The record gives the reactivity of an RNA of 207 nucleotides to 2A3 and DMS. It was measured as part of the RMDB library OK3TST. DMS adducts were read by reverse transcription with MarathonRT. The 2A3 profile rests on 3,936 reads. The reactions ran in a buffer of 150 mM KOAc, 10 mM MgCl2 and 150 mM bicine (pH 8.5), at 24 C. The DMS profile rests on 5,521 reads. High DMS reactivity at an A or C suggests that its Watson-Crick edge is free.

RNA sequence: GGGAACGACUCGAGUAGAGUCGAAAAUAAUACAGAUUUAUUGUAGCUACUUAGUAUGUGAAAAGAAGUGUGUGAAAGCUUAGAAUAUGGAGCAUAAUAUUGUUUCAAUGUCAUUUCAAAUAUUGUCACCUUUCUACAAUAAUGAGAAAAGUGUAUACGUGAUAAUGUUUUUCGAAACAUUAUCACGAAAAGAAACAACAACAACAAC
Reactivity to 2A3 in 0.01 (KOAc 150mM, MgCl2 10mM, bicine 150mM(pH8.5), 24C), signal-to-noise 5, nucleotides 027 to 156: u140a000a020u070a030c020a030g060a050u020u070u060a010u050u090g010u010a020g020c030u040a030c050u160u040a030g050u030a150u150g060u010g060a030a040a030a050g070a050a020g020u020g010u010g010u010g090a100a040a020g040c030u080u070a050g070a090a030u120a090u150g050g020a000g000c010a010u050a140a060u080a270u080u070g020u000u030u010c030a060a040u110g060u050c020a040u020u030u050c020a030a070a060u190a130u070u130g060u050c000a040c020c000u020u100u020c000u020a040c000a050a040u090a080a080u120g020a010g090a050a070a070a020g040u050g020u040a080u030a070
Reactivity to DMS in 0.01 (KOAc 150mM, MgCl2 10mM, bicine 150mM(pH8.5), 24C), signal-to-noise 3, nucleotides 027 to 156: u000a070a080u000a300c060a070g000a140u000u000u000a030u010u000g010u000a050g030c050u000a050c070u000u000a120g010u000a040u000g030u020g000a060a070a070a150g010a080a070g010u000g030u000g020u000g000a040a060a130g000c040u000u010a100g030a080a090u000a080u000g020g030a070g010c010a060u000a070a120u000a080u000u000g000u000u000u000c010a110a120u010g000u000c020a140u000u000u010c000a050a060a100u000a080u000u000g000u000c040a050c020c010u000u000u000c000u000a040c060a070a110u010a080a110u000g010a190g000a050a020a010a070g000u020g020u000a080u000a130